Chemical mapping of a 207-nucleotide RNA with 2A3 and DMS. Conditions: 150 mM KOAc, 10 mM MgCl2 and 150 mM bicine (pH 8.5), 24 C.
RNA sequence: GGGAACGACUCGAGUAGAGUCGAAAAUCUCUAUUCGUAGAGAAGAUCGCGUACUACGGACGCUUUUGACGCUGGCAUGGAACUACGCUCUCCCAAAUAGGAGAGCGCCAUGUCAGCGAUAAGCGUCCGUAUCGCCCUGUACCAGAUUCGUCUGGAACGAUCAUAGAUUAUUCGUAAUCUAUGAUCGAAAAGAAACAACAACAACAAC
Reactivity to 2A3 in 0.01 (KOAc 150mM, MgCl2 10mM, bicine 150mM(pH8.5), 24C), signal-to-noise 4, nucleotides 027 to 156: u010c000u000c000u010a070u090u070c180g060u070a000g000a010g020a100a030g070a170u190c090g000c050g060u120a120c080u010a000c030g000g010a000c000g000c020u070u040u040u120g210a080c040g000c000u020g000g000c010a000u000g000g020a090a070c130u160a060c300g000c000u000c010u040c000c050c020a280a290a080u290a090g000g000a000g000a000g000c000g000c000c000a000u000g000u000c000a000g000c000g010a000u000a000a000g000c000g000u000c000c000g000u000a000u010c000g000c000c000c000u060g080u120a070c010c000a000g010a030u070u110c200g090u000c080u020g000g010a030a040
Reactivity to DMS in 0.01 (KOAc 150mM, MgCl2 10mM, bicine 150mM(pH8.5), 24C), signal-to-noise 2, nucleotides 027 to 156: u000c010u000c030u000a050u000u010c220g060u020a040g010a070g030a120a140g010a140u000c060g020c050g040u000a050c100u010a000c010g030g000a050c010g010c000u010u000u020u000g000a240c140g030c000u030g020g000c000a010u000g030g020a110a210c050u000a230c030g000c000u000c000u000c000c010c030a070a130a280u000a050g000g020a020g000a000g010c020g000c010c000a000u010g000u000c010a000g000c000g020a000u000a010a030g020c000g010u000c000c000g000u000a000u000c030g000c000c040c070u000g010u060a130c030c010a020g010a100u000u000c280g030u000c010u010g000g010a070a210
The DMS profile rests on 5,321 reads. Source: RMDB library RNAMAK, as collected in RNAgym.